[RMDB]
RNA sequence: GGGAACGACUCGAGUAGAGUCGAAAAUGGGAAGUAGGGUGGCCUAUCGAGCCAGCUGACUAUGUAGGGGUUCUGCUUCUUGAGUUCAACUAUAUCCACGUAAUAAGUACCUACAUCAAGAUCCCCCCAGGUACUCAUUUUUCGAAAUGAGUACCUGAAAAGAAACAACAACAACAAC
Reactivity to DMS in 0.01 (KOAc 150mM, MgCl2 10mM, bicine 150mM(pH8.5), 24C), signal-to-noise 6, nucleotides 027 to 126: u000g010g020g000a040a050g020u000a060g010g010g010u000g000g000c020c020u010a100u010c180g010a240g010c020c020a070g000c070u010g010a090c090u000a060u000g010u000a020g000g000g010g020u000u000c060u010g010c030u000u000c040u000u000g000a080g000u000u000c090a050a100c090u000a090u000a070u000c020c040a050c140g010u000a070a070u000a060a070g010u000a120c010c010u000a010c060a060u010c150a070a050g010a110u000c000c010c000c030c050
Reactivity to 2A3 in 0.01 (KOAc 150mM, MgCl2 10mM, bicine 150mM(pH8.5), 24C), signal-to-noise 3, nucleotides 027 to 126: u130g000g000g020a040a020g030u040a040g020g000g100u030g020g020c020c020u170a190u180c070g010a020g010c000c000a030g050c030u030g030a050c040u060a040u120g020u020a020g000g000g010g000u040u040c020u060g000c010u020u000c000u000u070g070a040g020u020u070c030a070a030c060u070a040u030a030u300c040c030a110c080g040u020a030a080u060a290a050g050u050a070c000c000u010a010c000a050u080c030a030a050g050a140u080c000c000c000c010c000